The record gives the reactivity of an RNA of 177 nucleotides to DMS and 2A3. For 2A3 the reverse transcriptase was SuperScript II with manganese. Source: RMDB library TTRDEL, as collected in RNAgym.

RNA sequence: GGGAACGACUCGAGUAGAGUCGAAAAGAUAUGGAAAGGCUUUGAUCAUGGGCUGACUUUGAUCUCGGAAACGAGGGAGUCAACCCAUGGGAGCCUUUCCUAAGUCAAAGAGACCUUCGGGUCUCAACCUAAUAGAGACGUUCGCGUCUCUAUUAGGAAAAGAAACAACAACAACAAC
Reactivity to DMS in 0.01 (KOAc 150mM, MgCl2 10mM, bicine 150mM(pH8.5), 24C), signal-to-noise 2, nucleotides 027 to 126: g010a040u000a300u010g000g010a000a000a000g000g030c000u000u000u000g010a110u000c010a010u010g010g000g010c030u000g010a020c000u010u000u010g000a110u010c010u000c000g000g000a150a090a230c000g000a010g020g000g000a000g000u000c000a000a010c000c000c010a010u010g010g010g010a000g010c000c010u000u000u000c000c000u000a000a090g000u010c060a100a150a170g000a010g000a020c000c000u000u010c190g010g000g000u010c000u000c010a040a070
Reactivity to 2A3 in 0.01 (KOAc 150mM, MgCl2 10mM, bicine 150mM(pH8.5), 24C), signal-to-noise 2, nucleotides 027 to 126: g000a010u080a060u100g000g020a020a000a010g010g020c040u300u170u140g110a120u230c030a010u010g000g000g000c020u010g030a010c020u130u260u190g150a150u100c000u010c000g030g040a040a070a050c030g000a010g000g020g000a000g010u020c010a000a030c000c000c000a010u000g000g000g000a000g000c010c000u010u010u010c000c000u000a000a010g000u020c010a010a200a090g010a000g020a000c000c000u010u070c300g120g000g000u000c010u000c010a000a000